Conditions: 150 mM KOAc, 10 mM MgCl2 and 150 mM bicine (pH 8.5), 24 C. An RNA of 177 nucleotides, treated with 2A3 and DMS and read out base by base. For 2A3 the reverse transcriptase was SuperScript II with manganese. Values cover nucleotides 27 to 126. The 2A3 profile rests on 3,424 reads. Source: RMDB library OK2TST, as collected in RNAgym.
[RMDB]
RNA sequence: GGGAACGACUCGAGUAGAGUCGAAAAGACGGCGAGAUCGUCCUCACCGAGGUCGACGAGGACGAACUCGAGAUGGCACGCGGCUACAUGGCCCAGGGCGGCUACGACGACCUCGCGUGGUACGAACUAAAUAUACCACCUUCGGGUGGUAUAUUUAAAAAGAAACAACAACAACAAC
Reactivity to 2A3 in 0.01 (KOAc 150mM, MgCl2 10mM, bicine 150mM(pH8.5), 24C), signal-to-noise 3, nucleotides 027 to 126: g050a010c020g010g060c000g000a010g010a050u010c010g000u010c000c010u000c020a050c040c070g070a060g030g080u110c030g040a200c040g010a060g040g010a010c010g020a030a020c000u000c010g000a020g010a040u140g070g000c050a020c090g040c040g020g000c030u100a080c080a180u140g040g010c000c010c020a050g040g140g000c050g010g000c010u030a020c020g090a020c030g000a020c010c000u010c000g000c040g010u020g020g030u040a070c030g030a080a010c040
Reactivity to DMS in 0.01 (KOAc 150mM, MgCl2 10mM, bicine 150mM(pH8.5), 24C), signal-to-noise 6, nucleotides 027 to 126: g010a100c070g000g010c020g000a020g010a080u010c000g000u000c000c000u010c010a230c110c030g010a120g000g000u000c020g030a170c100g000a070g000g000a040c040g000a010a050c010u000c010g010a070g010a100u000g020g000c050a050c070g000c050g020g010c030u000a090c160a120u000g000g020c010c000c070a130g000g000g010c050g010g000c020u000a040c070g010a120c060g000a030c030c010u000c020g010c060g010u000g000g010u000a070c080g010a110a140c140